[RMDB]
RNA sequence: GGGAACGACUCGAGUAGAGUCGAAAAAAAACGCUGGGUCAAGUGGGCUCCACUAGCUCUUUUGACGAGGCUCUGAAGCGCGCACGGAGCCUCGAUAAGAGCAUGGAGCAGCUUGACCUGUGCUGAAGCGCGCACGGCAACCGAAAGGUGCGAAAAAGAUCAUGUAAUGGUUCGCCAUUACAUGAUCAAAAGAAACAACAACAACAAC
Reactivity to DMS in 0.01 (KOAc 150mM, MgCl2 10mM, bicine 150mM(pH8.5), 24C), signal-to-noise 1, nucleotides 027 to 156: a080a080a180a060c020g000c070u030g030g020g030u000c000a000a000g000u020g000g040g030c000u000c000c010a030c170u010a170g000c000u000c000u020u000u000u000g010a230c100g000a010g030g060c000u000c000u020g010a040a060g000c000g020c040g000c020a300c050g000g000a020g020c010c030u000c010g000a020u000a030a020g000a010g040c020a250u000g020g010a020g110c000a130g000c010u000u000g010a000c000c020u010g000u020g010c050u020g000a120a020g020c040g030c030g050c020a300c010g000g000c040a030a110c000c020g040a100a150a190g040g000u000g010c000g030a060a060a030a190a190
Reactivity to 2A3 in 0.01 (KOAc 150mM, MgCl2 10mM, bicine 150mM(pH8.5), 24C), signal-to-noise 3, nucleotides 027 to 156: a000a030a030a050c030g000c020u040g020g030g000u000c010a010a020g030u050g230g300g000c010u020c010c000a040c140u100a060g000c010u010c000u040u070u090u150g280a290c140g000a000g000g010c010u010c000u010g100a160a100g000c010g000c010g000c000a020c020g030g000a000g000c000c000u010c000g000a010u040a020a040g000a000g000c000a000u000g000g000a000g000c000a000g010c010u000u000g000a010c000c000u000g000u010g000c000u000g040a110a040g010c010g000c000g000c000a010c010g020g000c000a010a040c000c000g000a070a060a030g000g000u000g000c000g060a140a000a010a020a000